[RMDB]
RNA sequence: GGGAACGACUCGAGUAGAGUCGAAAAGUCAAGCCUCAACCUCUAGUGUACCCCUUGGCCCAAGAGUCCUUUCUUAAGAUAUUAUGAUCUCACGGUAUGGUUCUUAAUAUCGUGGUCGGCACAUUCCGCAUGUGGCCUACUUCGGUAGGCCACAUGCAAAAGAAACAACAACAACAAC
Reactivity to 2A3 in 0.01 (KOAc 150mM, MgCl2 10mM, bicine 150mM(pH8.5), 24C), signal-to-noise 2, nucleotides 027 to 126: g140u120c090a150a000g000c020c000u000c010a040a050c000c000u140c060u000a100g000u050g000u300a080c040c000c000c000u000u020g080g000c000c000c000a010a000g010a000g010u040c020c000u000u060u050c070u080u170a120a060g000a000u030a040u020u170a170u250g010a060u030c010u000c110a020c010g000g030u180a200u130g080g000u040u000c000u060u110a100a020u000a030u090c010g030u020g010g060u040c070g000g010c000a000c000a080u090u140c060c050